Chemical mapping of a 207-nucleotide RNA with DMS and 2A3. The DMS profile rests on 6,211 reads. Conditions: 150 mM KOAc, 10 mM MgCl2 and 150 mM bicine (pH 8.5), 24 C.
RNA sequence: GGGAACGACUCGAGUAGAGUCGAAAAACUGGCUCUUUAUCCACCAGCUCUGAGUAUAGCGGACUUCCUGUAAUCAACUGUGAGUGAAAUAGCAGAUCAAAGAGUAUUGCUACCGUGUCUUAGUAGCUACUAGUUCAUUAACUGAACUCAAGAAUGGACUAUGGUUUGGAUUCGUCCAAACCAUAGUAAAAGAAACAACAACAACAAC
Reactivity to DMS in 0.01 (KOAc 150mM, MgCl2 10mM, bicine 150mM(pH8.5), 24C), signal-to-noise 3, nucleotides 027 to 156: a070c060u000g010g000c030u000c050u000u010u010a110u010c040c050a050c030c020a060g000c020u000c030u010g010a150g050u010a120u000a080g010c060g020g010a110c000u000u010c020c020u040g010u000a080a070u000c030a060a070c040u000g000u010g010a060g060u000g000a070a040a050u000a110g030c030a080g050a070u010c050a070a050a070g000a100g010u000a090u010u010g010c020u010a040c020c040g030u000g010u000c080u010u000a100g010u000a020g000c000u000a070c030u000a030g010u010u000c010a050u000u020a040a120c160u010g040a040a050c030u000c050a050a080g000a120a090u000g010g000
Reactivity to 2A3 in 0.01 (KOAc 150mM, MgCl2 10mM, bicine 150mM(pH8.5), 24C), signal-to-noise 5, nucleotides 027 to 156: a000c040u030g040g000c010u000c010u070u100u060a080u050c030c020a020c010c020a040g020c010u010c000u040g040a020g020u080a050u070a120g070c070g040g060a090c020u100u060c040c010u040g030u080a060a090u100c030a020a160c040u040g020u040g070a060g040u090g030a040a060a050u090a040g030c020a010g020a100u070c040a020a090a040g060a010g030u070a070u070u120g000c000u000a020c000c020g080u050g050u110c050u050u090a040g000u020a000g010c000u010a030c010u010a010g020u000u000c010a020u090u130a160a030c110u030g010a000a010c000u010c030a030a130g070a090a100u110g060g010